Conditions: 150 mM KOAc, 10 mM MgCl2 and 150 mM bicine (pH 8.5), 24 C. Structure probing data (DMS and 2A3) for a 177-nucleotide construct. For 2A3, 2,295 sequencing reads were counted. For 2A3 the reverse transcriptase was SuperScript II with manganese. DMS adducts were read by reverse transcription with MarathonRT.

RNA sequence: GGGAACGACUCGAGUAGAGUCGAAAAAAAGUUAGCGUACUAGAGUCCCCGUGAGUACGCUAUGGUUCCGUGAGACUCUACUCGAGCGUAUCACGGAACCCACGUACAUACCGUACGUGCUAUAAAAACUAUGAGUUCGAUUCGUCGAACUCAUAGUAAAAGAAACAACAACAACAAC
Reactivity to DMS in 0.01 (KOAc 150mM, MgCl2 10mM, bicine 150mM(pH8.5), 24C), signal-to-noise 2, nucleotides 027 to 126: a120a030a080g020u000u000a010g020c010g000u000a000c000u000a280g000a110g000u000c020c000c020c080g010u000g000a030g000u000a000c010g020c000u000a000u000g000g000u000u010c010c020g040u000g010a190g010a030c010u000c000u000a040c030u010c020g010a030g000c060g000u010a110u000c020a020c030g000g000a070a020c050c040c000a000c010g000u000a000c000a180u010a080c300c190g020u000a000c000g020u000g000c080u000a120u010a060a080a050a060
Reactivity to 2A3 in 0.01 (KOAc 150mM, MgCl2 10mM, bicine 150mM(pH8.5), 24C), signal-to-noise 2, nucleotides 027 to 126: a000a000a000g080u050u000a020g020c010g000u000a020c000u010a040g100a070g230u120c030c020c000c010g070u040g060a010g000u000a000c000g000c000u010a010u000g040g000u060u000c020c010g000u010g000a030g000a010c010u000c000u020a070c010u020c040g000a000g020c020g030u030a050u050c020a020c020g000g010a010a010c000c000c010a000c000g020u000a000c000a050u170a170c070c100g000u010a000c000g000u000g010c020u070a100u160a130a120a020a010